The data come from the RNA Mapping Database (RMDB), library OK2TRN. An RNA of 177 nucleotides, treated with 2A3 and DMS and read out base by base. Conditions: 150 mM KOAc, 10 mM MgCl2 and 150 mM bicine (pH 8.5), 24 C. Reactivities are given for positions 27 through 126.

RNA sequence: GGGAACGACUCGAGUAGAGUCGAAAACGCUAGCGCUGCCACAGCUAUCCAUCCAUGUGGAAGCCGCCGCGCCUCAGCGCUAUGUUGACAUAGUUACUGACGAGUCAGGGGUACUCAGUCCCGAUGACCGAAGUAAUAGCUUCGGCUAUUACUUCGGAAAAGAAACAACAACAACAAC
Reactivity to 2A3 in 0.01 (KOAc 150mM, MgCl2 10mM, bicine 150mM(pH8.5), 24C), signal-to-noise 3, nucleotides 027 to 126: c010g000c020u010a000g040c000g010c010u000g030c010c050a130c030a040g010c020u130a300u060c010c000a010u060c090c020a130u300g010u040g030g020a010a000g010c020c010g030c000c020g000c000g040c020c030u150c090a010g020c010g000c030u060a060u170g100u100u180g050a030c020a050u140a050g080u140u020a070c010u040g150a070c020g000a000g010u020c060a080g080g000g000g000u050a050c020u000c100a010g080u070c010c000c010g080a110u120g030a010
Reactivity to DMS in 0.01 (KOAc 150mM, MgCl2 10mM, bicine 150mM(pH8.5), 24C), signal-to-noise 3, nucleotides 027 to 126: c040g030c060u010a070g020c010g030c030u000g010c030c200a080c270a100g010c040u000a120u000c020c000a060u000c150c210a100u000g030u000g000g000a070a030g000c030c100g000c030c150g000c040g030c010c100u010c090a010g020c120g010c000u000a020u010g020u000u010g000a080c030a080u010a100g020u000u000a030c030u010g000a120c050g000a020g000u000c010a100g000g000g010g000u000a060c140u020c130a120g020u000c010c010c000g010a130u020g000a240